[RMDB]
RNA sequence: GGGAACGACUCGAGUAGAGUCGAAAAGAUUCGGCGGCCCUGUCAUGAGGCCGAAACGAAGGCACGUACCCCUUCGAAUGGCGUCGGGGAGUCAGCGGCUAUAUAUGCGCUUAAUGCUGGCAUCCGGGAGAACCCUCAUCCUUCGGGAUGAGGGUAAGAACUAUGUAGCGUUCGCGCUACAUAGUUCAAAAGAAACAACAACAACAAC
Reactivity to 2A3 in 0.01 (KOAc 150mM, MgCl2 10mM, bicine 150mM(pH8.5), 24C), signal-to-noise 2, nucleotides 027 to 156: g040a090u130u150c040g040g010c000g010g000c070c010c010u010g050u050c020a030u040g020a030g000g040c060c060g070a060a010a000c010g000a000a000g000g030c140a050c190g110u140a100c050c010c000c010u010u010c020g020a030a020u040g000g000c070g150u030c010g000g050g000g000a070g010u000c000a000g010c010g030g000c050u000a000u030a030u020a030u300g110c090g010c050u040u110a160a000u270g000c000u010g000g000c010a050u020c030c000g000g030g000a150g050a030a030c000c000c000u000c000a000u000c000c000u060u070c170g090g000g000a010u000g000a000g000g000g000u000a010a000
Reactivity to DMS in 0.01 (KOAc 150mM, MgCl2 10mM, bicine 150mM(pH8.5), 24C), signal-to-noise 1, nucleotides 027 to 156: g010a160u000u000c010g010g040c000g030g000c000c000c020u000g020u000c240a150u000g010a090g000g100c000c010g000a000a000a100c020g030a060a030g020g000c080a090c020g000u000a300c000c030c000c020u010u000c020g010a130a090u000g020g000c050g040u000c040g000g030g000g000a140g030u000c020a050g040c050g020g090c050u000a170u000a070u000a090u010g010c070g050c050u000u000a080a160u000g000c010u000g020g000c040a050u000c000c040g000g010g000a200g000a040a130c000c000c020u000c010a020u000c000c000u000u010c300g130g030g020a010u000g000a000g010g000g010u000a000a010
The record gives the reactivity of an RNA of 207 nucleotides to 2A3 and DMS. High DMS reactivity at an A or C suggests that its Watson-Crick edge is free. The RNA was probed in 150 mM KOAc, 10 mM MgCl2 and 150 mM bicine (pH 8.5) at 24 C.